[RMDB]
RNA sequence: GGGAACGACUCGAGUAGAGUCGAAAAAAAACUAUAUACAAGUGGUGGUAGUCCGCCACUCUAAGGGAACGCCUUUAGAAGAAGAGGCUAGGGGGUAUUCCGGUGUGGGAUACUUAGUAAUAUGCAAUUGACGUCGACAACUUCGGUUGUCGACGAACAGAUACAUUACCUUCGGGUAAUGUAUCUGAAAAGAAACAACAACAACAAC
Reactivity to 2A3 in 0.01 (KOAc 150mM, MgCl2 10mM, bicine 150mM(pH8.5), 24C), signal-to-noise 1, nucleotides 027 to 156: a000a000a000a000c250u270a200u020a030u100a230c040a110a080g000u000g000g010u010g050g030u020a000g010u000c010c000g010c000c000a000c010u010c000u010a000a000g030g000g000a120a050c080g230c000c000u020u000u030a020g000a100a000g000a030a000g020a010g000g000c000u010a010g020g000g000g000g000u000a020u060u040c070c100g270g030u190g100u220g050g020g000a000u030a020c000u080u060a050g030u050a090a160u090a110u300g040c040a070a070u060u160g070a000c030g000u010c010g000a000c000a000a000c000u050u050c230g030g020u000u000g000u000c000g040a000c000g010a000a000
Chemical mapping of a 207-nucleotide RNA with 2A3. Conditions: 150 mM KOAc, 10 mM MgCl2 and 150 mM bicine (pH 8.5), 24 C. Source: RMDB library M2RFPK, as collected in RNAgym.